The record gives the reactivity of an RNA of 207 nucleotides to 2A3. It was measured as part of the RMDB library OK3TST. 2A3 adducts were read by reverse transcription with SuperScript II with manganese. The RNA was probed in 150 mM KOAc, 10 mM MgCl2 and 150 mM bicine (pH 8.5) at 24 C.
[RMDB]
RNA sequence: GGGAACGACUCGAGUAGAGUCGAAAAUGACAAAAGAGACCCCAAGAGUGGGAGGUGCGCAGCCUGGGUUUGGUUUCUAGCUUUAUCCCAGACUUCCUGUGUGACCUUGGGCAAGUCACGGGGCCUCCCUGAGCCUCAGUUUCCUCAUCUCUGCAAACUCAGUAUGAUCGUUCGCGAUCAUACUGAGAAAAGAAACAACAACAACAAC
Reactivity to 2A3 in 0.01 (KOAc 150mM, MgCl2 10mM, bicine 150mM(pH8.5), 24C), signal-to-noise 1, nucleotides 027 to 156: u070g030a030c040a050a110a030a020g060a030g010a050c050c010c000c070a100a050g030a010g080u100g020g030g000a010g010g020u080g020c120g010c070a030g000c010c010u010g010g010g030u030u060u020g090g020u130u180u100c090u140a040g050c020u060u040u040a090u250c020c010c010a010g000a020c020u120u110c030c010u060g020u020g010u030g110a030c010c000u000u010g000g000g010c020a010a000g030u020c000a000c010g000g000g010g010c010c000u010c050c010c000u000g010a000g010c000c000u040c000a010g010u000u020u030c000c020u080c010a070u000c060u020c030u120g050c020a050a030a120